[RMDB]
RNA sequence: GGGAACGACUCGAGUAGAGUCGAAAAGUGAGAAUGUUCGCAUUCUCACAAAUAAAUACAGCGGUUUAAAUUAGCUCCGCAUAACCGCUGAUGCGGAGCUAAAAAGCUUGCCGUUCGCGGCAAGCAACCGAAUCUAUAUCUUCGGAUAUAGAUUCGGAAAAGAAACAACAACAACAAC
Reactivity to 2A3 in 0.01 (KOAc 150mM, MgCl2 10mM, bicine 150mM(pH8.5), 24C), signal-to-noise 2, nucleotides 027 to 126: g030u010g000a040g000a010a020u020g010u090u130c190g000c080a000u000u020c000u000c000a000c000a000a010a000u010a010a010a000u150a020c040a040g040c020g040g120u140u160u180a080a180a070u060u020a070g000c000u000c000c000g000c010a010u030a040a030c050c020g010c040u020g000a000u010g020c000g000g020a000g020c020u000a010a000a000a020a010g000c000u020u010g010c060c030g020u050u050c270g000c010g060g020c010a000a000g000c000a000a000
Reactivity to DMS in 0.01 (KOAc 150mM, MgCl2 10mM, bicine 150mM(pH8.5), 24C), signal-to-noise 1, nucleotides 027 to 126: g000u000g000a020g000a060a010u000g010u000u000c230g010c000a030u000u000c000u000c000a000c000a040a090a040u010a060a060a050u000a090c070a080g000c040g000g010u010u010u000a080a030a110u000u000a010g000c000u000c000c000g070c010a010u000a090a060c040c040g010c030u010g020a020u000g030c030g020g020a030g000c000u010a000a010a070a170a060g000c000u000u000g010c030c000g000u000u000c220g060c010g030g020c000a010a010g020c000a040a090

Source: RMDB library M2PK50, as collected in RNAgym. Chemical mapping of a 177-nucleotide RNA with 2A3 and DMS. For 2A3 the reverse transcriptase was SuperScript II with manganese. For DMS, 1,073 sequencing reads were counted. Values are in units of 0.01, from 0 to 300, in steps of 10.